This 177-nucleotide RNA was probed chemically with DMS and 2A3.
RNA sequence: GGGAACGACUCGAGUAGAGUCGAAAAAUGCAGAUUAUGGGUGUGGUUAUGCAGAGUGGUGUGAGAAAAGUUACAUAUGGUACUGCGCAUUGGUUGUUUGCGACCCUUGUCUCAACCUAUGUGAUAAGUUUAUCGGUAACUUCGGUUACCGAUAAACAAAAGAAACAACAACAACAAC
Reactivity to DMS in 0.01 (KOAc 150mM, MgCl2 10mM, bicine 150mM(pH8.5), 24C), signal-to-noise 2, nucleotides 027 to 126: a070u010g000c040a080g000a100u000u010a090u000g010g020g040u000g000u000g000g000u000u030a080u000g000c060a070g010a100g000u000g000g010u000g020u010g010a070g010a060a070a070a140g010u010u010a000c040a030u000a050u030g010g000u000a130c140u000g000c300g010c050a030u000u010g000g000u000u000g010u010u010u010g010c070g000a030c020c020c040u000u000g010u010c030u000c020a070a030c000c030u000a040u000g020u000g000a060u000a070a130
Reactivity to 2A3 in 0.01 (KOAc 150mM, MgCl2 10mM, bicine 150mM(pH8.5), 24C), signal-to-noise 1, nucleotides 027 to 126: a000u100g000c080a000g010a100u080u110a070u190g030g000g020u020g040u020g030g010u070u040a030u110g040c010a020g020a020g010u030g060g040u070g020u020g000a110g020a080a110a010a010g030u060u020a020c040a020u040a080u100g040g000u030a050c020u030g000c010g000c010a010u000u020g000g020u000u000g040u060u110u160g080c050g000a000c010c000c000u030u010g050u030c030u030c040a080a140c000c000u010a030u030g000u010g000a020u010a080a040